[RMDB]
The record gives the reactivity of an RNA of 177 nucleotides to 2A3 and DMS. Conditions: 150 mM KOAc, 10 mM MgCl2 and 150 mM bicine (pH 8.5), 24 C. For 2A3, 25,546 sequencing reads were counted.

RNA sequence: GGGAACGACUCGAGUAGAGUCGAAAACUGGAUUCGGCUACGGUAGGCUUGCUGACGCGCUCAUAGAGAAUACUGUGAAUGCCGAACGGCAGCUUCACUGCCGCGCCACUCAUAUCGCCAAUGAGCAAUUACUAAUCAUCUUCGGAUGAUUAGUAAUAAAAGAAACAACAACAACAAC
Reactivity to 2A3 in 0.01 (KOAc 150mM, MgCl2 10mM, bicine 150mM(pH8.5), 24C), signal-to-noise 9, nucleotides 027 to 126: c030u050g050g030a100u080u070c040g010g000c020u070a060c050g010g040u030a010g020g020c040u060u140g010c020u050g030a040c040g030c020g010c060u000c020a020u040a020g060a010g050a120a100u180a200c010u020g010u010g080a090a040u160g030c040c010g050a060a010c000g000g000c010a010g000c010u100u090c080a080c070u020g000c000c000g000c010g010c000c010a030c010u050c020a060u080a100u140c070g020c050c020a060a120u090g010a030g040c010a020
Reactivity to DMS in 0.01 (KOAc 150mM, MgCl2 10mM, bicine 150mM(pH8.5), 24C), signal-to-noise 8, nucleotides 027 to 126: c090u020g000g000a150u010u000c030g010g020c010u010a070c110g010g020u020a030g010g000c000u000u030g030c100u020g010a140c150g010c100g000c050u000c000a020u000a060g010a150g020a130a100u040a070c020u000g000u000g000a040a030u010g000c030c020g020a050a090c070g000g000c020a010g000c070u000u020c160a100c040u000g000c020c010g000c300g000c040c020a100c040u000c010a030u010a070u000c110g010c070c080a060a050u010g000a040g000c290a100